[RMDB]
This 177-nucleotide RNA was probed chemically with 2A3 and DMS.
It was measured as part of the RMDB library RFMREP.
RNA sequence: GGGAACGACUCGAGUAGAGUCGAAAACCAGGGCAAGUGAGGCGCAAGCCUCGCUGACGGCGUGGAAAGGGCUCUCUCUGAGGCCCGAGUACGCUGAAAGUGCCACAGAAACGUAGCUUUUCUGGCGGACAAACUUAAGGUUCGCCUUAAGUUUGUCAAAAGAAACAACAACAACAAC
Reactivity to 2A3 in 0.01 (KOAc 150mM, MgCl2 10mM, bicine 150mM(pH8.5), 24C), signal-to-noise 2, nucleotides 027 to 126: c010c000a020g000g050g000c020a030a030g010u010g050a010g000g000c000g030c040a050a010g000c020c010u000c010g010c000u020g000a030c010g030g020c020g010u020g070g070a220a130a120g000g000g010c010u030c000u000c010u000c150u300g030a010g000g000c010c010c000g000a000g010u000a000c020g010c000u000g050a030a050a030g150u090g050c010c000a090c020a070g160a040a050a000c060g090u070a030g070c050u100u030u030u040c030u010g050g040c090g090
Reactivity to DMS in 0.01 (KOAc 150mM, MgCl2 10mM, bicine 150mM(pH8.5), 24C), signal-to-noise 3, nucleotides 027 to 126: c000c000a210g010g020g010c040a080a040g000u000g010a000g010g020c000g010c300a120a190g020c000c000u000c000g010c010u000g010a300c010g000g000c020g010u000g000g010a080a200a270g010g000g000c000u020c010u000c010u000c120u010g000a010g020g000c000c000c010g000a070g000u010a030c000g010c000u000g020a040a140a100g010u010g010c020c000a150c070a080g000a050a040a020c200g000u010a140g010c110u000u000u000u000c010u000g000g000c140g000

For 2A3, 1,886 sequencing reads were counted. In probing experiments dimethyl sulfate is read out at A N1 and C N3, which are open when not base-paired. The reactions ran in a buffer of 150 mM KOAc, 10 mM MgCl2 and 150 mM bicine (pH 8.5), at 24 C. Reactivities are given for positions 27 through 126.